Background
Conditions: 150 mM KOAc, 10 mM MgCl2 and 150 mM bicine (pH 8.5), 24 C. Chemical mapping of a 177-nucleotide RNA with DMS and 2A3. The DMS profile rests on 1,034 reads. Values are in units of 0.01, from 0 to 300, in steps of 10.

[RMDB]
RNA sequence: GGGAACGACUCGAGUAGAGUCGAAAACUAUUGCCUGAGUGUGCUAGAGUCCUCGAAGAGUAACUGCUGACCUUAUUCACUGGCUGUGGGCCUUAUGGCACAGUCAGUCACCAGGUUAGAGACAUGCCCACGUAGGUAGGUUCGCCUACCUACGUGGAAAAGAAACAACAACAACAAC
Reactivity to DMS in 0.01 (KOAc 150mM, MgCl2 10mM, bicine 150mM(pH8.5), 24C), signal-to-noise 1, nucleotides 027 to 126: c060u010a040u000u000g000c020c000u010g000a090g000u020g010u000g010c040u000a050g000a120g000u010c050c060u000c030g010a070a080g030a100g010u000a070a120c140u000g000c000u040g010a030c050c030u000u000a110u010u000c290a010c020u000g000g000c000u000g000u000g030g000g000c030c010u010u010a160u020g000g000c000a070c000a000g010u000c000a010g000u000c120a080c250c160a010g000g030u000u000a040g000a110g000a080c130a060u000g020c140
Reactivity to 2A3 in 0.01 (KOAc 150mM, MgCl2 10mM, bicine 150mM(pH8.5), 24C), signal-to-noise 2, nucleotides 027 to 126: c020u030a030u090u250g030c010c050u100g070a060g030u120g030u040g010c030u040a020g010a010g080u000c000c000u030c060g100a120a070g050a010g070u050a130a060c040u080g010c010u000g070a020c000c010u030u060a070u220u120c030a030c010u010g000g000c000u000g020u050g040g170g060c020c000u250u300a260u300g000g000c020a000c000a000g000u000c000a000g000u010c000a010c000c030a000g010g030u010u010a020g030a000g000a040c030a060u150g000c010
Source: RMDB library RFMREP, as collected in RNAgym.